[RMDB]
Structure probing data (2A3) for a 177-nucleotide construct. The RNA was probed in 150 mM KOAc, 10 mM MgCl2 and 150 mM bicine (pH 8.5) at 24 C. Reactivities are given for positions 27 through 126.
RNA sequence: GGGAACGACUCGAGUAGAGUCGAAAAGAUAUGGAUAGAGCAACAGCGACACGGUCGGAAACGACCGGUCGACAUGCUCGUCCUAAGUCAAAACCGCGAUGCUAGUGUUCGCACUAGCAUCGCGGAACGAGAUGGACAAGUUCGCUUGUCCAUCUCGAAAAGAAACAACAACAACAAC
Reactivity to 2A3 in 0.01 (KOAc 150mM, MgCl2 10mM, bicine 150mM(pH8.5), 24C), signal-to-noise 1, nucleotides 027 to 126: g010a000u050a030u090g000g000a030u120a300g000a090g000c010a010a190c080a170g300c010g030a020c100a110c300g040g020u000c000g040g000a070a070a030c020g030a000c000c000g020g020u000c000g030a050c000a010u060g000c000u030c020g000u040c000c000u070a220a000g030u030c050a010a020a090a230c010c000g000c000g030a000u010g000c010u000a000g020u020g090u200u170c300g040c190a000c000u000a000g000c010a010u010c000g000c030g010g000a000a000
It was measured as part of the RMDB library TTRDEL. For 2A3, 1,554 sequencing reads were counted.